[RMDB]
RNA sequence: GGGAACGACUCGAGUAGAGUCGAAAAUGCCGCGGUGCGCCGCCGGUGCCAUCUCGGCCUUCCUGCUCACCGAGCCCGACGUCGGAUCCGAUCCGGCCCGGCUGGCCUCGACGGCCACACCGAUCGACCCACCCCUCCCAUUCGUGGGAGGGGUGGGAAAAGAAACAACAACAACAAC
Reactivity to 2A3 in 0.01 (KOAc 150mM, MgCl2 10mM, bicine 150mM(pH8.5), 24C), signal-to-noise 2, nucleotides 027 to 126: u220g010c020c040g000c000g040g030u030g000c090g020c020c000g060c010c060g040g000u070g030c020c000a090u110c060u000c000g040g000c020c010u000u010c000c010u000g000c010u030c040a230c020c090g010a000g050c010c070c000g110a100c040g010u050c000g010g030a020u070c010c070g070a080u000c050c020g030g000c010c030c000g010g000c020u080g000g000c000c030u050c030g130a180c050g010g000c020c000a060c000a010c010c000g060a110u040c020g100a070
Description:
This 177-nucleotide RNA was probed chemically with 2A3. It was measured as part of the RMDB library OK1LIB. The reactions ran in a buffer of 150 mM KOAc, 10 mM MgCl2 and 150 mM bicine (pH 8.5), at 24 C. For 2A3 the reverse transcriptase was SuperScript II with manganese.